[RMDB]
The data come from the RNA Mapping Database (RMDB), library M2PK50. An RNA of 177 nucleotides, treated with 2A3 and DMS and read out base by base. The RNA was probed in 150 mM KOAc, 10 mM MgCl2 and 150 mM bicine (pH 8.5) at 24 C. The 2A3 profile rests on 5,816 reads. 2A3 adducts were read by reverse transcription with SuperScript II with manganese. DMS adducts were read by reverse transcription with MarathonRT.
RNA sequence: GGGAACGACUCGAGUAGAGUCGAAAACUCGGUUAAUUCGUUAACCGAGACUUCUUAAACAUCUUUUCAACACAUUGAUGGUAAAUAUUCAAAGAUGUUCGAAUGCGAUAAACUUCGGUUUAUCGAAACUAUCAGACUCUUUCGAGAGUCUGAUAGUAAAAGAAACAACAACAACAAC
Reactivity to 2A3 in 0.01 (KOAc 150mM, MgCl2 10mM, bicine 150mM(pH8.5), 24C), signal-to-noise 5, nucleotides 027 to 126: c000u000c000g000g000u010u020a020a030u060u090c110g020u010u010a000a000c010c000g000a010g000a010c010u030u010c000u020u130a090a050a020c010a020u000c020u050u050u070u070c090a100a040c030a030c030a240u160u280g070a140u070g130g030u060a050a200a070u190a100u090u070c040a000a000a040g020a010u010g020u000u030c060g100a210a070u170g030c000g000a000u000a010a010a010c000u020u050c180g080g010u000u000u010a000u000c000g010a060a000
Reactivity to DMS in 0.01 (KOAc 150mM, MgCl2 10mM, bicine 150mM(pH8.5), 24C), signal-to-noise 4, nucleotides 027 to 126: c010u000c000g000g000u000u000a010a020u000u040c160g020u000u000a000a010c000c000g010a010g000a030c070u000u000c010u000u010a080a050a050c020a010u000c000u000u000u000u010c110a060a080c100a060c080a140u000u020g000a160u000g010g020u010a050a100a120u000a110u000u000c100a030a010a040g000a020u000g000u000u010c240g000a080a080u010g000c010g000a000u000a010a010a010c000u000u010c180g020g000u000u000u000a000u000c000g000a040a070